[RMDB]
The record gives the reactivity of an RNA of 207 nucleotides to 2A3. For 2A3, 1,145 sequencing reads were counted. High 2A3 reactivity points to a flexible backbone, as in loops and unpaired stretches.
RNA sequence: GGGAACGACUCGAGUAGAGUCGAAAAGGGGUCUGGUGGAGGCAUCUAGUAGGACAUGCUCUACUGAAGCCUCCACGGUAGAGCAACAGCCUACAGGGAUGCCUAUGAAGCCAGACGGAGGCACCCAAAGCACUUCUGGGUUCGCCCAGAAGUGCAAUCUAUCAUGUCAGUUCGCUGACAUGAUAGAAAAAGAAACAACAACAACAAC
Reactivity to 2A3 in 0.01 (KOAc 150mM, MgCl2 10mM, bicine 150mM(pH8.5), 24C), signal-to-noise 1, nucleotides 027 to 156: g010g010g060g040u000c000u020g000g010u010g000g010a020g020g000c000a000u000c010u020a010g000u000a040g000g080a070c100a210u150g000c010u000c020u030a000c040u010g020a110a030g010c000c050u000c000c000a010c010g000g000u000a000g000a010g010c030a040a130c020a120g080c000c000u000a000c010a010g160g060g050a000u020g000c020c000u090a160u040g000a000a000g000c020c010a000g000a000c010g010g000a000g000g020c010a030c000c010c000a080a020a010g010c000a000c000u000u000c000u030g030g030g020u110u090c200g170c020c000c000a000g000a000a000g000u000g000c000a000a010